[RMDB]
RNA sequence: GGGAACGACUCGAGUAGAGUCGAAAAGAAUCACCGUACCUAUUUAGGUUUACGCUCCAAGAUCGGUGGAUAGCAGCCCUAUCAGUAUCUAGGAGAACUGUGCUAUGUUUAGAAGAUUAGGUAGUCUAUUACACAGCCAUGUUCGCAUGGCUGUGAACUAUCUGGAUUUGUUCGCAAAUCCAGAUAGAAAAGAAACAACAACAACAAC
Reactivity to DMS in 0.01 (KOAc 150mM, MgCl2 10mM, bicine 150mM(pH8.5), 24C), signal-to-noise 3, nucleotides 027 to 156: g010a150a080u010c020a140c020c020g020u010a020c010c010u000a190u000u000u000a040g030g010u000u000u000a060c060g030c010u010c010c010a120a180g020a050u000c040g020g020u020g020g000a090u000a090g030c040a180g010c130c080c010u000a100u000c030a140g010u010a080u000c070u000a180g000g010a080g000a090a080c040u000g000u000g000c050u000a070u000g000u000u010u000a120g010a130a110g000a100u000u000a070g020g010u000a100g020u010c050u000a100u000u000a180c000a010c000a000g000c000c000a020u000g010u000u000c300g000c000a030u000g010g000c000u020g000u000g000a010a110
Reactivity to 2A3 in 0.01 (KOAc 150mM, MgCl2 10mM, bicine 150mM(pH8.5), 24C), signal-to-noise 6, nucleotides 027 to 156: g050a030a050u110c010a010c040c020g030u040a020c000c020u060a110u180u210u220a040g000g020u030u040u070a030c040g020c020u000c000c010a050a020g010a050u020c020g040g080u070g080g030a010u080a040g080c090a020g040c030c000c000u050a050u070c050a040g120u140a040u030c020u040a060g020g010a040g010a050a040c060u080g020u020g080c030u060a020u130g070u060u080u040a140g020a180a050g020a150u120u070a050g030g030u020a030g030u020c050u040a120u060u130a080c000a000c010a000g000c000c000a000u010g030u050u060c160g000c100a000u000g000g000c000u000g000u000g000a000a000
Structure probing data (DMS and 2A3) for a 207-nucleotide construct. The DMS profile rests on 6,945 reads. The reactions ran in a buffer of 150 mM KOAc, 10 mM MgCl2 and 150 mM bicine (pH 8.5), at 24 C. The 2A3 profile rests on 4,262 reads.